This 207-nucleotide RNA was probed chemically with DMS and 2A3. It was measured as part of the RMDB library OK3TST. As a SHAPE reagent, 2A3 marks flexible, mostly unpaired nucleotides at the ribose 2'-OH.
RNA sequence: GGGAACGACUCGAGUAGAGUCGAAAAAGAACAUGCAGCUGUUACAGAAACUUCAUUAAUGAUGUAUUUUGCACCAGAACUUGUUAGAGAAGAUCAAAUAUUAGAUACAGAAAAUGCUAGUCCAGCAACUUAUUACAGAUAUCCAAUCGAAAAAGAAAAAUAUUACCUACUUCGGUAGGUAAUAUUUAAAAGAAACAACAACAACAAC
Reactivity to DMS in 0.01 (KOAc 150mM, MgCl2 10mM, bicine 150mM(pH8.5), 24C), signal-to-noise 2, nucleotides 027 to 156: a160g020a080a100c020a040u000g010c060a130g040c020u010g000u000u000a070c080a080g030a080a050a040c000u000u000c050a090u000u010a140a120u020g010a060u000g000u000a110u000u020u000u000g060c000a010c040c050a090g010a110a080c050u010u000g020u000u000a100g000a110g000a110a060g000a080u000c030a000a080a140u000a090u000u000a140g020a080u020a200c030a160g020a050a120a100a050u010g010c000u000a110g020u000c050c030a150g000c060a040a030c020u000u000a040u000u000a110c040a130g010a100u010a010u000c020c050a060a100u010c070g000a050a050a030a080a190g010a030a160
Reactivity to 2A3 in 0.01 (KOAc 150mM, MgCl2 10mM, bicine 150mM(pH8.5), 24C), signal-to-noise 2, nucleotides 027 to 156: a010g070a030a000c060a020u100g000c020a040g000c040u000g050u130u060a030c030a030g060a020a050a040c010u000u020c070a090u060u250a170a140u190g010a010u000g000u070a110u040u070u050u110g010c010a010c010c010a000g040a040a030c000u040u030g010u070u130a080g010a000g000a100a020g030a030u030c010a020a110a030u070a020u100u110a050g030a030u060a100c010a020g190a060a080a030a000u030g020c000u000a040g050u050c020c030a000g050c010a060a000c030u040u090a020u060u110a120c010a010g040a060u060a020u130c060c030a080a040u160c120g130a130a060a040a040a100g160a020a100

The RNA was probed in 150 mM KOAc, 10 mM MgCl2 and 150 mM bicine (pH 8.5) at 24 C.